Conditions: 150 mM KOAc, 10 mM MgCl2 and 150 mM bicine (pH 8.5), 24 C. An RNA of 207 nucleotides, treated with 2A3 and read out base by base. The data come from the RNA Mapping Database (RMDB), library RFM130. Values cover nucleotides 27 to 156. The 2A3 profile rests on 716 reads.

RNA sequence: GGGAACGACUCGAGUAGAGUCGAAAAAUCCUCAGGACCUGGGCUUGGGUGGUAGGAGGAAUUGGUGCUGGUCUUUCAUUUUGGAUUUGACUCCAGCCCCACAGCCUCAGCCACCCCAGCCAAUUGUCAUAGGAGAAAAGUCAACUUCGGUUGACAACCUAUAAAAGACGUUCGCGUCUUUUAUAGGAAAAGAAACAACAACAACAAC
Reactivity to 2A3 in 0.01 (KOAc 150mM, MgCl2 10mM, bicine 150mM(pH8.5), 24C), signal-to-noise 2, nucleotides 027 to 156: a010u010c010c000u080c010a080g090g060a030c020c030u220g030g050g000c000u010u010g010g000g010u010g020g030u060a190g030g190a020g000g050a010a050u070u030g010g000u010g010c000u000g010g030u020c000u010u080u050c040a110u090u260u260u220g180g050a080u060u000u180g010a050c050u040c050c000a000g000c050c040c000c000a050c000a010g030c000c000u010c010a000g000c000c000a010c040c000c010c000a000g010c000c000a000a000u030u040g000u020c010a000u090a050g010g050a000g060a060a030a010a050g010u080c000a000a000c000u060u060c240g050g000u010u000g000a000c010a010a040